[RMDB]
RNA sequence: GGGAACGACUCGAGUAGAGUCGAAAAGAUAUGGAAUCUGUAGAGCGACGAUCUACUAGUCGGAAACGACUAGGUAGGGAGCUCUACAGAUUCCUAAGUCAAAGGCUUUGUCUUCGGACAAAGCCAAGACUACGAAUAGGUUCGCCUAUUCGUAGUCAAAAGAAACAACAACAACAAC
Reactivity to DMS in 0.01 (KOAc 150mM, MgCl2 10mM, bicine 150mM(pH8.5), 24C), signal-to-noise 2, nucleotides 027 to 126: g000a030u010a180u010g000g000a040a000u000c000u000g020u000a010g000a000g020c010g010a110c300g000a030u010c000u000a010c000u000a000g000u000c000g040g000a030a030a110c000g020a010c010u000a030g030g020u010a000g010g020g010a020g040c000u000c010u010a000c000a010g000a000u010u000c000c000u000a000a060g000u000c010a150a170a120g020g030c010u000u010u000g000u000c010u010u000c230g000g010a020c000a010a010a010g030c000c000a010a050